[RMDB]
RNA sequence: GGGAACGACUCGAGUAGAGUCGAAAAGAGGAGUCAUUCGUGACUCCUCAAAGGGAGCUCAACUCUCCCGCUCAAGUCCGAGACCCUUCGGACCCAAAAGAAUGCUGUUCCUGUUCGCAGGAACAAACACUGUCUAUAGGUUCGCCUAUAGACAGUGAAAAGAAACAACAACAACAAC
Reactivity to DMS in 0.01 (KOAc 150mM, MgCl2 10mM, bicine 150mM(pH8.5), 24C), signal-to-noise 7, nucleotides 027 to 126: g000a010g000g000a020g010u000c000a040u000u010c160g040u010g010a010c000u000c000c000u000c000a010a030a060g010g000g000a020g010c220u010c280a100a130c300u010c000u000c000c000c010g000c150u000c120a150a150g000u000c010c000g010a030g000a110c030c050c040u010u000c010g000g000a030c010c050c080a040a090a100a080g000a100a080u010g000c140u000g010u000u000c000c000u000g000u000u010c160g010c010a010g000g000a010a000c000a020a060a160
Reactivity to 2A3 in 0.01 (KOAc 150mM, MgCl2 10mM, bicine 150mM(pH8.5), 24C), signal-to-noise 2, nucleotides 027 to 126: g000a000g010g000a000g010u010c010a020u090u120c160g110u080g000a000c000u000c000c000u000c000a000a010a000g000g000g000a010g000c030u040c220a030a080c060u010c000u000c080c000c010g010c030u100c060a080a010g010u000c010c000g010a030g020a210c040c010c000u030u010c010g010g000a020c000c010c000a090a160a020a040g180a100a080u170g060c070u050g040u010u000c000c000u010g040u030u050c270g000c040a000g000g000a000a000c000a000a010a000
Chemical mapping of a 177-nucleotide RNA with DMS and 2A3. The data come from the RNA Mapping Database (RMDB), library M2PK50. 2A3 is a SHAPE reagent: it acylates the 2'-hydroxyl of flexible nucleotides of all four kinds. For 2A3, 22,627 sequencing reads were counted. Conditions: 150 mM KOAc, 10 mM MgCl2 and 150 mM bicine (pH 8.5), 24 C.